[RMDB]
RNA sequence: GGGAACGACUCGAGUAGAGUCGAAAAGAUAUGGAUUUGCAUGCGAGCGAGGAUCUCAAUUCGGAAACGAAUUGAGGGAGCUCCAUGCUGAAUCCUAAGUCAAAACGCGAAACUUCGGUUUCGCGAAGAGUACUAUAUACUUCGGUAUAUAGUACUCAAAAGAAACAACAACAACAAC
Reactivity to DMS in 0.01 (KOAc 150mM, MgCl2 10mM, bicine 150mM(pH8.5), 24C), signal-to-noise 6, nucleotides 027 to 126: g000a030u000a110u020g000g000a010u000u000u010g010c000a010u010g010c300g000a020g030c010g010a070g030g000a010u010c000u010c000a000a010u000u000c000g010g010a030a040a060c000g010a020a000u000u000g000a020g000g010g000a010g030c000u000c000c010a010u000g020c000u010g010a040a030u000c000c000u000a020a140g000u000c020a100a080a130a220c030g010c000g000a010a010a010c000u000u020c250g030g000u000u000u000c000g030c010g000a020a060
Reactivity to 2A3 in 0.01 (KOAc 150mM, MgCl2 10mM, bicine 150mM(pH8.5), 24C), signal-to-noise 5, nucleotides 027 to 126: g010a000u020a000u070g000g000a000u030u020u220g010c000a010u020g080c190g100a000g010c030g110a300g050g000a000u000c000u000c000a000a010u010u000c000g000g000a000a010a000c000g000a000a000u000u000g010a010g000g000g000a000g000c000u000c000c000a000u000g000c000u000g050a020a040u000c000c010u000a010a000g010u000c010a010a020a110a180c020g010c000g010a010a000a000c000u070u130c300g140g000u010u010u000c000g000c010g010a030a010